[RMDB]
RNA sequence: GGGAACGACUCGAGUAGAGUCGAAAACGUUGACCAUUUCAGUAGAAGUUGGAGAUAUUGUUCAAAUUCUUUUUCCUGAAGUUGUUCCAAUCGAGGAGGCUCUAGGUCAAAAGAAAAAGCUGAACUUAGAUAUGGUUUAUCUUGUAACAGAUGUAGACAAUACUCCGAGGUUCGCCUCGGAGUAUUGAAAAGAAACAACAACAACAAC
Reactivity to 2A3 in 0.01 (KOAc 150mM, MgCl2 10mM, bicine 150mM(pH8.5), 24C), signal-to-noise 2, nucleotides 027 to 156: c080g040u000u050g030a010c020c000a000u010u060u040c070a080g020u100a050g030a170a030g030u050u050g080g040a030g010a080u080a070u130u230g040u060u010c010a030a080a070u010u010c010u000u050u030u030u020c000c000u110g010a080a000g030u040u050g060u230u000c050c030a070a070u240c110g020a060g030g000a000g000g000c000u000c050u130a010g020g000u030c040a000a000a000a130g000a020a090a020a000a010g060c130u070g010a040a010c000u010u080a030g010a030u060a060u110g020g100u010u050u080a040u060c040u100u130g040u120a090a050c020a050g000a100u150g030u170a040g040a060
Reactivity to DMS in 0.01 (KOAc 150mM, MgCl2 10mM, bicine 150mM(pH8.5), 24C), signal-to-noise 1, nucleotides 027 to 156: c130g020u000u000g000a180c000c020a160u010u000u000c000a180g000u000a110g030a060a120g000u020u000g010g020a210g030a090u000a030u000u010g010u010u000c020a050a040a160u000u000c010u000u000u010u010u010c040c020u030g050a030a100g010u000u000g000u000u000c030c000a070a220u000c130g000a100g010g010a280g000g030c030u000c010u000a050g000g010u000c050a050a040a100a110g010a090a100a080a010a150g020c010u000g010a080a100c010u000u000a050g010a120u000a060u000g010g010u000u000u000a050u010c020u000u010g010u000a130a170c070a100g030a100u010g020u000a120g020a140